Chemical mapping of a 177-nucleotide RNA with DMS and 2A3. 2A3 adducts were read by reverse transcription with SuperScript II with manganese. Source: RMDB library OK2TRN, as collected in RNAgym. DMS adducts were read by reverse transcription with MarathonRT.
[RMDB]
RNA sequence: GGGAACGACUCGAGUAGAGUCGAAAACACUAUGUUGGCCAGACUGGUCUUGAACUCCUCACCUCAAGUGAUCUGCCCACCUCAGCCUUGCAAAGUGCUGGGAUUACAGGUGUGAACCACUGUGCCCGUAGGAUGUACGAUUCGUCGUACAUCCUACAAAAGAAACAACAACAACAAC
Reactivity to DMS in 0.01 (KOAc 150mM, MgCl2 10mM, bicine 150mM(pH8.5), 24C), signal-to-noise 6, nucleotides 027 to 126: c090a090c150u000a050u010g020u010u010g000g000c080c040a070g000a090c090u000g010g010u010c030u000u000g010a070a090c060u000c030c020u000c060a080c090c050u000c050a060a080g010u000g010a060u000c030u000g010c090c020c060a100c120c000u000c010a030g000c010c000u010u000g010c260a070a050a030g010u010g010c010u000g000g000g000a080u010u010a070c110a060g000g010u000g000u000g020a080a090c060c030a030c070u000g000u000g010c030c020c050
Reactivity to 2A3 in 0.01 (KOAc 150mM, MgCl2 10mM, bicine 150mM(pH8.5), 24C), signal-to-noise 4, nucleotides 027 to 126: c030a030c040u120a090u220g080u100u100g090g010c020c000a020g050a130c080u090g020g040u050c000u010u080g050a060a030c000u030c030c010u010c030a040c010c010u040c030a070a020g020u020g060a070u010c020u060g010c010c020c000a030c030c000u020c010a000g020c000c010u070u140g110c110a160a090a000g040u120g060c020u000g010g010g010a010u040u110a030c050a010g000g010u010g020u020g070a030a030c030c010a020c030u060g050u100g040c010c000c010